[RMDB]
RNA sequence: GGGAACGACUCGAGUAGAGUCGAAAAGAAGAAUUACAUGUGCGUUAAGUGUCAUUGGAACGGGAAGUUGUCCAUUGAACGAAAAAUGAAUUUAUUUCAUUUGCGGUGCGUGUAUCGCAAAAGAAAAAGUCCUACCAGGUUUCGACCUGGUAGGACUAAAAGAAACAACAACAACAAC
Reactivity to DMS in 0.01 (KOAc 150mM, MgCl2 10mM, bicine 150mM(pH8.5), 24C), signal-to-noise 1, nucleotides 027 to 126: g000a030a150g010a090a110u000u060a000c000a120u000g020u030g010c000g010u050u020a030a080g030u050g000u010c030a080u000u000g010g000a050a000c100g010g000g070a080a300g000u010u030g030u000c000c030a010u000u000g000a010a000c010g000a000a000a000a000a020u000g010a030a010u000u030u050a010u010u050u000c000a000u000u000u000g010c070g000g070u040g000c000g020u000g000u000a030u000c130g000c240a010a020a020a090g000a000a040a020a110
Reactivity to 2A3 in 0.01 (KOAc 150mM, MgCl2 10mM, bicine 150mM(pH8.5), 24C), signal-to-noise 2, nucleotides 027 to 126: g170a020a020g030a000a020u110u000a000c000a070u040g030u090g120c020g050u010u090a120a060g030u070g050u040c000a000u000u000g030g000a090a000c010g050g010g130a070a070g060u210u150g010u150c010c000a000u000u000g000a030a000c010g100a020a000a010a010a000u000g000a000a000u230u150u080a160u140u160u070c010a020u000u000u000g030c100g010g010u010g000c020g040u010g000u010a000u020c050g000c150a040a030a000a030g190a080a170a000a000
Annotation:
An RNA of 177 nucleotides, treated with DMS and 2A3 and read out base by base. The reactions ran in a buffer of 150 mM KOAc, 10 mM MgCl2 and 150 mM bicine (pH 8.5), at 24 C.